RNA sequence: GGGAACGACUCGAGUAGAGUCGAAAAUGCCUGUAAUCCCAGCUACUCGGGAGGCUGAGGCACAAGAAUCACUUGAACCCAGGAGGUGGAGGUUGCAGUGAGCUGAGAUAGCGCUCUGCCUGGCGACACCUCUAUGGUUUUUCGAAACCAUAGAGGUAAAAGAAACAACAACAACAAC
Reactivity to 2A3 in 0.01 (KOAc 150mM, MgCl2 10mM, bicine 150mM(pH8.5), 24C), signal-to-noise 8, nucleotides 027 to 126: u040g010c010c000u070g150u170a030a060u040c000c000c000a010g030c040u100a110c040u050c080g020g010g010a020g000g020c090u050g070a040g040g000c020a010c010a050a040g060a070a110u130c040a040c110u040u060g050a050a040c000c000c030a040g040g080a040g000g050u070g020g040a080g040g030u250u150g030c020a040g030u030g100a020g010c030u030g020a030g010a150u120a060g040c050g020c030u010c010u030g020c010c000u020g030g020c010g020a010c010
Reactivity to DMS in 0.01 (KOAc 150mM, MgCl2 10mM, bicine 150mM(pH8.5), 24C), signal-to-noise 9, nucleotides 027 to 126: u010g010c010c000u000g010u000a180a110u000c010c010c000a120g010c060u000a060c090u000c110g000g000g010a060g000g010c090u000g000a040g010g010c030a090c100a070a070g000a130a120u010c090a070c030u000u010g010a070a110c040c010c020a110g000g000a070g010g010u000g010g010a060g010g000u000u000g020c040a060g000u000g000a040g010c030u000g000a110g010a120u010a090g010c040g000c010u000c020u000g000c020c030u000g010g000c040g010a100c150
An RNA of 177 nucleotides, treated with 2A3 and DMS and read out base by base. The DMS profile rests on 37,075 reads. For 2A3, 21,096 sequencing reads were counted. The RNA was probed in 150 mM KOAc, 10 mM MgCl2 and 150 mM bicine (pH 8.5) at 24 C.